[RMDB]
RNA sequence: GGGAACGACUCGAGUAGAGUCGAAAAUCAAGGUCGUCGUGGAUGACGAUGAUGUUGGCCGGCGCCACCGAGUAGAACUUCGCCAGCGGCCCUAUCUGGCGGCCGGACUCGUUCAUGUAGCAGCGCGCCCUAGUAGGUUAUUCGUAACCUACUAGGGAAAAGAAACAACAACAACAAC
Reactivity to DMS in 0.01 (KOAc 150mM, MgCl2 10mM, bicine 150mM(pH8.5), 24C), signal-to-noise 7, nucleotides 027 to 126: u010c040a080a070g010g010u000c010g020u000c020g000u000g010g010a150u010g000a050c010g010a050u000g010a070u000g010u010u000g010g010c080c010g000g010c040g010c040c040a080c090c050g010a070g010u010a080g000a090a180c080u000u000c050g010c020c020a050g010c120g000g000c030c020c030u000a070u010c060u000g000g010c030g010g020c090c040g000g000a070c040u000c050g010u000u000c080a060u010g010u000a080g010c060a070g010c030g010c110g000
Reactivity to 2A3 in 0.01 (KOAc 150mM, MgCl2 10mM, bicine 150mM(pH8.5), 24C), signal-to-noise 5, nucleotides 027 to 126: u120c000a030a050g120g000u030c010g000u010c030g030u100g130g210a220u220g070a030c050g010a000u050g010a030u090g100u170u090g060g030c030c040g030g010c030g030c030c020a030c030c040g020a020g020u080a040g020a080a030c040u090u080c050g010c000c020a010g010c000g040g020c000c030c000u070a100u080c040u020g020g000c000g030g000c030c000g000g000a040c020u030c020g040u090u070c060a090u150g050u090a020g020c070a040g020c030g000c000g010